Record summary:
The record gives the reactivity of an RNA of 207 nucleotides to 2A3.
[RMDB]
RNA sequence: GGGAACGACUCGAGUAGAGUCGAAAAACAAGGCCUUGGCCAGCCCUACCGGGGCCCUGGAGACAGACUCACUGGUCAGAGUCACCCCCAUUGGGCUGAAAGGGACCAGCCUCUCUACUCCCUUGCUCAAUCACAAAAAGUGGGCUGCUCUGGGAAACGGUUCAUAAACUUUCGAGUUUAUGAACCGAAAAGAAACAACAACAACAAC
Reactivity to 2A3 in 0.01 (KOAc 150mM, MgCl2 10mM, bicine 150mM(pH8.5), 24C), signal-to-noise 1, nucleotides 027 to 156: a030c000a010a030g040g010c000c010u040u040g030g000c030c030a050g000c010c020c010u010a020c010c020g020g000g020g010c000c000c020u040g020g020a110g070a110c100a040g010a110c020u030c000a060c040u110g000g160u160c040a020g020a010g040u030c030a030c020c000c010c000c010a040u030u000g000g000g030c000u010g080a040a060a020g000g000g000a000c000c020a020g050c020c010u070c030u040c020u060a100c070u020c000c000c000u000u020g000c010u010c050a060a050u100c070a070c060a200a030a170a000a000g050u050g050g020g000c000u010g000c010u050c050u070g060g030g000a200a030a010
Reactivities are given for positions 27 through 156. Source: RMDB library OK3TST, as collected in RNAgym. The RNA was probed in 150 mM KOAc, 10 mM MgCl2 and 150 mM bicine (pH 8.5) at 24 C. High 2A3 reactivity points to a flexible backbone, as in loops and unpaired stretches.